Chemical mapping of a 177-nucleotide RNA with 2A3 and DMS.

[RMDB]
RNA sequence: GGGAACGACUCGAGUAGAGUCGAAAAACUAGGAGCGCACAUCUCUCUAAGACUGUACGACAGUCAGUCUCUCUAGCACGCUUGUUCAACGAGAGAGAGAGAGCGUUGGAACAAGUGUGCAACGAAAACUACCCACAAGUUUCGACUUGUGGGUAGUAAAAGAAACAACAACAACAAC
Reactivity to 2A3 in 0.01 (KOAc 150mM, MgCl2 10mM, bicine 150mM(pH8.5), 24C), signal-to-noise 3, nucleotides 027 to 126: a020c080u060a040g060g000a030g020c040g050c050a020c020a160u070c030u000c000u000c010u040a080a030g010a010c010u030g090u140a050c080g080a030c090a020g000u010c000a010g020u000c020u010c000u000c050u130a030g000c000a000c010g000c010u000u010g010u000u010c000a020a010c010g010a010g000a010g000a010g000a000g000a010g010a260g030c010g000u010u030g160g020a000a010c000a000a000g000u010g010u000g000c000a000a010c020g020a050a040a030
Reactivity to DMS in 0.01 (KOAc 150mM, MgCl2 10mM, bicine 150mM(pH8.5), 24C), signal-to-noise 3, nucleotides 027 to 126: a100c110u000a060g020g010a080g000c050g020c090a120c080a110u010c000u000c040u020c050u000a100a110g000a010c010u000g010u010a050c070g000a300c300a010g000u000c000a050g010u010c060u000c060u020c040u000a270g000c010a010c000g020c020u000u000g010u010u000c000a020a010c030g010a070g000a080g000a110g000a100g010a050g000a130g000c040g000u000u000g010g040a020a010c010a040a020g000u000g000u000g020c010a020a010c230g010a050a050a040
The RNA was probed in 150 mM KOAc, 10 mM MgCl2 and 150 mM bicine (pH 8.5) at 24 C.
For DMS the reverse transcriptase was MarathonRT.
Reactivities are given for positions 27 through 126.